[RMDB]
RNA sequence: GGGAACGACUCGAGUAGAGUCGAAAAUCUUCUUUCCCUUCUCUCGUCUUCCUCGGUCAACCUUCGAAGUUCCUCUUCUUCCUCCCUGCUGAGGUUCUUCCCUCCCGAGGAGAGCUGCUUCUUCUUGAUAGCUGUGGGUUCGCCCACAGCAAAAGAAACAACAACAACAAC
Reactivity to DMS in 0.01 (KOAc 150mM, MgCl2 10mM, bicine 150mM(pH8.5), 24C), signal-to-noise 4, nucleotides 027 to 129: u050c120u050u000c110u000u040u000c000c000c000u020u000c020u010c030u010c050g010u020c000u070u000c040c030u010c000g050g000u050c100a070a070c000c000u030u030c110g010a070a070g020u030u010c050c000u020c040u050u010c020u040u000c080c050u000c040c020c040u030g010c050u000g000a070g020g020u040u010c030u050u000c040c030c030u040c050c010c000g010a080g090g000a040g000a030g040c090u020g010c050u030u020c000u010u100c050u000u000g050a000u080a070
Reactivity to 2A3 in 0.01 (KOAc 150mM, MgCl2 10mM, bicine 150mM(pH8.5), 24C), signal-to-noise 3, nucleotides 027 to 129: u070c000u160u000c000u010u040u020c010c000c000u070u070c070u030c010u000c040g060u020c020u140u020c030c000u010c020g000g020u040c070a070a100c010c030u140u110c040g030a030a000g010u000u010c010c040u020c000u040u000c000u100u070c010c000u020c010c000c000u000g000c000u000g010a000g030g010u020u000c000u010u020c010c000c020u040c020c000c000g000a010g000g020a020g000a020g010c080u090g000c000u070u000c000u070u000c000u050u040g020a100u100a080
Source: RMDB library 15KLIB, as collected in RNAgym. The record gives the reactivity of an RNA of 170 nucleotides to DMS and 2A3. The RNA was probed in 150 mM KOAc, 10 mM MgCl2 and 150 mM bicine (pH 8.5) at 24 C. For 2A3 the reverse transcriptase was SuperScript II with manganese.